Structure probing data (DMS and 2A3) for a 177-nucleotide construct. Reactivities are given for positions 27 through 126. For DMS the reverse transcriptase was MarathonRT. The reactions ran in a buffer of 150 mM KOAc, 10 mM MgCl2 and 150 mM bicine (pH 8.5), at 24 C. The DMS profile rests on 1,103 reads. 2A3 is a SHAPE reagent: it acylates the 2'-hydroxyl of flexible nucleotides of all four kinds.

RNA sequence: GGGAACGACUCGAGUAGAGUCGAAAAUAAACAUGGCACUUGUUGUACUACAAGGGACAGAUUUUAUCGCUUGGCAAAUGAGUGUGCUCAGGUGCUAAGCGAAUAUGUUCUAUGUGGUGGUGGUUACGUAAUUCUUUCUCUUCGGAGAAAGAAUUACAAAAGAAACAACAACAACAAC
Reactivity to DMS in 0.01 (KOAc 150mM, MgCl2 10mM, bicine 150mM(pH8.5), 24C), signal-to-noise 1, nucleotides 027 to 126: u000a050a070a110c090a100u020g000g000c060a090c060u000u000g000u010u000g020u000a020c090u000a020c060a060a300g000g010g000a010c040a040g000a150u030u000u010u010a080u000c010g000c000u000u000g000g030c000a000a040a010u000g010a030g020u010g010u010g020c010u000c000a020g000g040u000g000c020u000a030a000g000c000g000a010a010u000a030u000g000u000u010c030u000a120u030g020u000g000g000u000g040g010u000g000g020u000u000a040c090
Reactivity to 2A3 in 0.01 (KOAc 150mM, MgCl2 10mM, bicine 150mM(pH8.5), 24C), signal-to-noise 1, nucleotides 027 to 126: u050a000a030a010c070a020u100g090g010c010a010c030u080u090g010u050u040g030u090a040c000u000a000c020a080a190g030g000g030a000c000a000g060a060u000u090u030u180a100u070c010g000c000u020u010g010g000c020a000a050a000u000g000a010g020u200g050u160g130c000u000c000a010g070g000u000g010c000u020a000a000g000c000g000a010a000u020a010u020g020u000u000c020u030a050u080g050u010g040g010u010g010g020u030g000g130u040u040a070c080